[RMDB]
RNA sequence: GGGAACGACUCGAGUAGAGUCGAAAAGAAAGAAAGAAAGGUUCGUAAAGGGCAAACUUAGUGAAAAUUAAGGACGCAAAGCUAUUGGUCUAAGGGUAUUUACCUAUGAUUGCAAAGCUGCCAACAAUCAUUAGCCCGUUUUCGAACGGGCUAAUGAAAAAGAAACAACAACAACAAC
Reactivity to DMS in 0.01 (KOAc 150mM, MgCl2 10mM, bicine 150mM(pH8.5), 24C), signal-to-noise 2, nucleotides 027 to 126: g010a070a140a110g010a100a060a090g010a100a120a100g010g030u000u000c100g030u020a060a050a050g000g000g000c000a270a190a150c020u010u000a000g000u020g000a000a000a020a000u000u010a000a010g010g010a080c020g010c040a020a030a020g010c010u000a040u000u000g000g020u000c010u010a020a090g000g000g050u010a130u090u020u030a000c000c010u020a020u050g000a000u000u000g000c010a010a060a010g000c000u000g000c010c010a040a120c170a080a100
Reactivity to 2A3 in 0.01 (KOAc 150mM, MgCl2 10mM, bicine 150mM(pH8.5), 24C), signal-to-noise 3, nucleotides 027 to 126: g040a000a040a010g040a000a060a000g090a090a080a020g070g000u080u100c080g040u090a110a030a110g130g010g000c000a030a050a010c020u000u020a000g010u000g010a000a000a000a020u020u020a020a010g010g000a000c000g010c010a000a000a010g000c000u050a090u130u000g030g010u000c000u010a000a040g020g020g000u100a210u090u300u170a020c000c000u000a000u040g000a000u010u020g000c000a030a000a020g000c000u010g010c040c010a040a070c040a010a050
Chemical mapping of a 177-nucleotide RNA with DMS and 2A3. The RNA was probed in 150 mM KOAc, 10 mM MgCl2 and 150 mM bicine (pH 8.5) at 24 C. The DMS profile rests on 3,429 reads.